RNA sequence: GGGAACGACUCGAGUAGAGUCGAAAAGAACAUCAGUUCGCUGAUGUUCAAAGGCCGAGUAGUGUUGGGUCGCGAAAGGCCAUACAAAAACAUUCACUCAGAAAACAACGUCCUUCGGGACGUUGAAGAAUCCUCUUACGUUCGCGUAAGAGGAUUCAAAAGAAACAACAACAACAAC
Reactivity to 2A3 in 0.01 (KOAc 150mM, MgCl2 10mM, bicine 150mM(pH8.5), 24C), signal-to-noise 2, nucleotides 027 to 126: g020a000a000c000a000u010c000a000g030u040u110c150g040c080u000g010a000u010g000u000u000c000a000a000a030g010g000c000c000g000a000g000u010a010g010u010g120u150u150g210g210g180u210c020g000c000g000a010a000a000g000g000c000c000a000u080a000c010a010a060a000a020a010c040a050u100u180c070a030c070u090c010a020g140a050a110a020a030c000a020a010c010g000u000c000c000u020u080c160g000g000g020a000c000g000u000u000g000a000a000
Reactivity to DMS in 0.01 (KOAc 150mM, MgCl2 10mM, bicine 150mM(pH8.5), 24C), signal-to-noise 2, nucleotides 027 to 126: g010a010a030c000a000u000c000a000g040u020u000c200g040c000u000g000a010u000g020u000u000c000a040a110a080g000g010c030c000g000a070g000u000a060g000u000g020u010u000g030g000g020u000c020g010c040g010a110a130a170g010g010c000c000a060u000a120c110a040a090a080a070a060c160a150u020u000c080a050c110u010c090a130g010a120a110a070a130c010a000a000c000g000u000c000c000u020u000c260g000g000g000a000c010g000u000u000g010a050a060